Structure probing data (2A3 and DMS) for a 177-nucleotide construct. Reactivities are given for positions 27 through 126. It was measured as part of the RMDB library OK2TRN. Values are in units of 0.01, from 0 to 300, in steps of 10. 2A3 adducts were read by reverse transcription with SuperScript II with manganese.
RNA sequence: GGGAACGACUCGAGUAGAGUCGAAAAGAGCGCGAGGGCUUCUACAUACCAAAGCUAAGUCGAGAACGUAUCAGUUCAAUAGUCCAAUGGCGGAGGAAAGGGGACACGCGAGCCAUGUUUGAUGCACAGUCCGUCAAAUAUUCGUAUUUGACGGACUAAAAGAAACAACAACAACAAC
Reactivity to 2A3 in 0.01 (KOAc 150mM, MgCl2 10mM, bicine 150mM(pH8.5), 24C), signal-to-noise 1, nucleotides 027 to 126: g070a000g030c030g010c040g040a120g020g140g050c000u050u050c000u040a090c000a070u220a040c070c010a010a010a000g030c010u020a060a170g010u020c030g020a050g000a160a000c020g050u160a080u300c080a080g010u010u000c060a050a110u060a120g020u020c000c020a040a010u050g000g010c010g030g000a040g000g000a070a000a030g000g020g000g010a000c000a030c060g000c020g040a030g070c010c000a030u040g140u020u130u120g060a080u070g020c030a020c020
Reactivity to DMS in 0.01 (KOAc 150mM, MgCl2 10mM, bicine 150mM(pH8.5), 24C), signal-to-noise 3, nucleotides 027 to 126: g000a090g000c080g010c050g000a130g040g020g010c030u000u020c040u000a100c130a130u030a180c080c010a040a300a080g010c030u000a040a100g010u000c000g000a150g010a030a040c070g030u000a100u010c200a060g020u000u000c020a080a130u000a110g000u000c020c010a050a020u010g010g040c040g010g000a300g010g000a030a030a080g010g000g000g000a060c060a070c080g020c060g030a070g000c020c030a040u010g010u000u010u000g020a040u000g010c110a100c240